This 177-nucleotide RNA was probed chemically with DMS and 2A3. Reactivities are given for positions 27 through 126. Source: RMDB library OK2TRN, as collected in RNAgym. The 2A3 profile rests on 1,574 reads. The RNA was probed in 150 mM KOAc, 10 mM MgCl2 and 150 mM bicine (pH 8.5) at 24 C.
RNA sequence: GGGAACGACUCGAGUAGAGUCGAAAAUGGAGAUUAUGGUCCAACUGCCAUUUCAAUUGGUAAAAAAGUGGGUUUGAUUAAAGAUGAUAAUUUUUUAAAUAUUGAUGGUUCUCAAUUGGACAAUAUGGUAUUAGUAUGCAUUCGUGCAUACUAAUACAAAAGAAACAACAACAACAAC
Reactivity to DMS in 0.01 (KOAc 150mM, MgCl2 10mM, bicine 150mM(pH8.5), 24C), signal-to-noise 3, nucleotides 027 to 126: u000g010g000a100g000a120u010u010a070u000g020g030u000c010c010a080a140c080u000g000c010c000a020u010u000u010c030a100a030u000u010g010g010u020a000a040a050a040a050a050g010u010g010g010g000u010u000u000g010a180u010u020a100a070a210g000a060u000g000a140u010a040a010u000u000u030u020u000u020a050a080a280u000a030u000u010g000a040u010g000g010u000u000c020u000c030a060a100u000u000g010g010a040c020a090a060u010a060u020g010
Reactivity to 2A3 in 0.01 (KOAc 150mM, MgCl2 10mM, bicine 150mM(pH8.5), 24C), signal-to-noise 3, nucleotides 027 to 126: u010g040g000a030g000a040u070u170a150u300g100g000u000c000c000a020a010c040u040g050c000c000a020u010u060u000c020a040a030u010u050g010g020u060a020a060a000a000a100a080g090u090g070g130g060u090u070u060g090a120u200u280a270a240a200g060a030u110g010a010u060a080a080u200u000u020u000u070u120a050a300a190u080a060u100u030g020a010u040g040g000u060u020c070u000c020a030a110u050u060g000g030a020c000a020a060u190a160u150g060